Structure probing data (2A3 and DMS) for a 207-nucleotide construct. Values are in units of 0.01, from 0 to 300, in steps of 10. For DMS the reverse transcriptase was MarathonRT. The 2A3 profile rests on 413 reads. Source: RMDB library OK3TST, as collected in RNAgym.
[RMDB]
RNA sequence: GGGAACGACUCGAGUAGAGUCGAAAAAUCAUUGAUGUACAUUUGGGUUGUUUACAGGUUUUUUCCUAAUAUGAACAAUGUCAUUACAAAUGUUCUAGUAUGGUACACAAGCUUUUCCUGGUGAAUGAGUGCGUUGGGCAUAAAAUUGCUGGCAGAACCACUGAUGGUAUUUCGAUACCAUCAGUGGAAAAGAAACAACAACAACAAC
Reactivity to 2A3 in 0.01 (KOAc 150mM, MgCl2 10mM, bicine 150mM(pH8.5), 24C), signal-to-noise 1, nucleotides 027 to 156: a000u070c020a030u030u090g040a080u140g120u080a080c050a050u020u060u040g050g000g000u020u010g040u050u030u000a110c080a030g000g060u010u010u000u050u180u150c020c010u080a060a030u100a080u300g020a020a010c010a020a100u020g120u290c080a110u100u130a010c040a060a000a050u070g000u020u000c000u020a030g020u050a060u080g000g010u100a010c050a000c020a010a030g060c000u020u060u020u040c010c000u000g000g000u010g010a100a050u070g000a070g060u010g000c000g030u120u040g000g000g000c060a050u150a140a000a020a160u110u040g040c040u000g000g070c070a000g080a030a080
Reactivity to DMS in 0.01 (KOAc 150mM, MgCl2 10mM, bicine 150mM(pH8.5), 24C), signal-to-noise 1, nucleotides 027 to 156: a050u010c030a090u000u000g020a140u000g020u010a060c010a050u010u010u000g000g000g020u000u010g000u000u000u010a110c130a170g010g000u010u000u010u000u000u000c030c020u000a090a120u000a080u010g010a020a060c020a040a130u010g020u000c110a140u000u000a120c040a050a030a110u020g010u000u000c050u000a210g020u000a130u000g000g000u000a030c060a030c090a070a110g000c040u000u010u010u010c000c020u000g010g060u000g020a060a070u010g000a050g040u010g020c030g040u020u010g010g000g010c020a090u000a050a020a090a090u000u000g000c020u000g010g000c030a070g020a110a210